[RMDB]
Structure probing data (2A3 and DMS) for a 207-nucleotide construct.
DMS adducts were read by reverse transcription with MarathonRT.
The data come from the RNA Mapping Database (RMDB), library OK3TST.
For 2A3, 884 sequencing reads were counted.
RNA sequence: GGGAACGACUCGAGUAGAGUCGAAAAUAUACAUGCGCAUGAAGCAGAACUAAUAGCCUAUGUUUUGCCGAAAUUAGAAGCUAUUGAGGGGCUUACCAUAUAUGGACCAAGCCAGCCUAGUGCAAGAUCUGGUCUGAUUUCUUUUAAUCUGGAUGAAGUAUAGGGACUCAUUCGUGAGUCCCUAUACAAAAGAAACAACAACAACAAC
Reactivity to 2A3 in 0.01 (KOAc 150mM, MgCl2 10mM, bicine 150mM(pH8.5), 24C), signal-to-noise 2, nucleotides 027 to 156: u170a000u000a000c110a080u080g070c070g000c020a040u080g020a090a020g000c020a010g030a060a000c010u050a010a080u010a130g010c000c000u050a090u100g040u040u040u060u100g050c000c000g060a030a080a020u100u050a110g020a110a010g000c050u030a010u040u090g060a060g010g040g000g000c000u010u020a030c020c000a060u080a020u070a060u230g020g010a030c090c010a010a000g030c000c010a000g000c000c010u030a030g030u010g130c030a020a010g020a060u030c030u050g030g030u040c010u010g090a130u050u070u050c010u030u110u050u170a080a090u120c070u110g030g140a050u260g130a080a020
Reactivity to DMS in 0.01 (KOAc 150mM, MgCl2 10mM, bicine 150mM(pH8.5), 24C), signal-to-noise 1, nucleotides 027 to 156: u010a100u000a040c050a210u000g010c050g000c060a090u000g030a240a020g050c020a050g010a070a140c070u010a040a080u000a130g000c060c060u010a200u000g020u030u000u000u000g050c040c030g000a090a080a090u000u000a070g000a060a130g000c020u010a060u000u000g020a080g020g000g020g030c040u010u000a100c030c060a090u000a170u010a100u010g030g010a060c010c070a050a100g000c020c010a120g010c020c050u010a080g010u020g040c020a060a100g010a080u000c050u010g000g010u000c030u010g000a050u000u000u010c040u000u000u010u010a060a040u000c100u010g000g000a110u000g020a080a240